[RMDB]
RNA sequence: GGGAACGACUCGAGUAGAGUCGAAAACAUGGUGGCAAGUACGACGCGAUAUUGCCCCACCUGCAAUAGAAGCGUAGACAUCAACUGUAGCGAGAGCUACUCAACUUAUGGACCUUAGAGCAAGCGAAGACGACCGGUCCUGUCGGAAUUCGCUAGAGCUGAUACCACGAUUCGUCGUGGUAUCAGCAAAAGAAACAACAACAACAAC
Reactivity to 2A3 in 0.01 (KOAc 150mM, MgCl2 10mM, bicine 150mM(pH8.5), 24C), signal-to-noise 2, nucleotides 027 to 156: c030a050u140g030g010u070g040g000c140a130a060g080u100a040c030g020a000c000g010c010g040a090u000a030u020u010g000c030c020c000c000a040c030c000u110g010c000a000a000u010a060g140a240a020g000c010g010u040a050g070a060c020a080u070c090a040a060c080u070g000u020a000g000c020g010a000g000a010g000c040u020a040c080u050c030a040a230c030u130u020a070u160g050g000a030c000c020u030u080a080g010a020g100c060a160a000g000c010g000a030a000g080a030c030g000a000c000c100g080g080u100c060c000u000g000u000c000g000g000a060a000u020u010c010g000c030u000a000g010a000
Chemical mapping of a 207-nucleotide RNA with 2A3. It was measured as part of the RMDB library OK3TST. 2A3 adducts were read by reverse transcription with SuperScript II with manganese.